[RMDB]
RNA sequence: GGGAACGACUCGAGUAGAGUCGAAAAACUUCCGCCCAUCAAACCCUCCAGGCGGCCUUGCCACCCCUACUGCAGGGCAAGACCAUCUACCUCCACCAUGUCCGCAGCCACACCAACCUCCCCGACCAACUACUCAGCUGUUCGCAGCUGAGUAGUUAAAAGAAACAACAACAACAAC
Reactivity to 2A3 in 0.01 (KOAc 150mM, MgCl2 10mM, bicine 150mM(pH8.5), 24C), signal-to-noise 3, nucleotides 027 to 126: a000c040u100u010c040c000g030c000c000c000a030u100c040a090a090a090c030c010c010u010c010c000a020g070g000c040g030g000c030c000u020u030g040c010c020a100c020c020c010c010u040a070c040u040g050c070a080g000g050g010c040a040a020g020a050c010c010a020u030c020u130a060c010c000u020c020c010a030c010c010a040u070g030u040c020c000g000c040a020g020c020c000a070c000a010c020c000a030a070c000c030u010c020c030c000c000g040a030c030c020
Reactivity to DMS in 0.01 (KOAc 150mM, MgCl2 10mM, bicine 150mM(pH8.5), 24C), signal-to-noise 1, nucleotides 027 to 126: a210c110u000u000c000c050g030c000c090c030a050u020c010a040a010a080c090c020c030u000c030c000a060g010g060c060g050g020c050c000u020u020g000c070c010a110c030c080c000c020u000a090c100u010g040c100a030g030g010g070c010a060a000g020a060c080c030a080u020c000u000a080c000c000u000c030c030a100c020c040a030u010g000u000c000c060g000c080a060g000c020c000a040c040a020c030c020a130a080c150c020u000c000c000c030c000g000a110c170c050
The record gives the reactivity of an RNA of 177 nucleotides to 2A3 and DMS. 2A3 adducts were read by reverse transcription with SuperScript II with manganese. The 2A3 profile rests on 2,155 reads. The RNA was probed in 150 mM KOAc, 10 mM MgCl2 and 150 mM bicine (pH 8.5) at 24 C.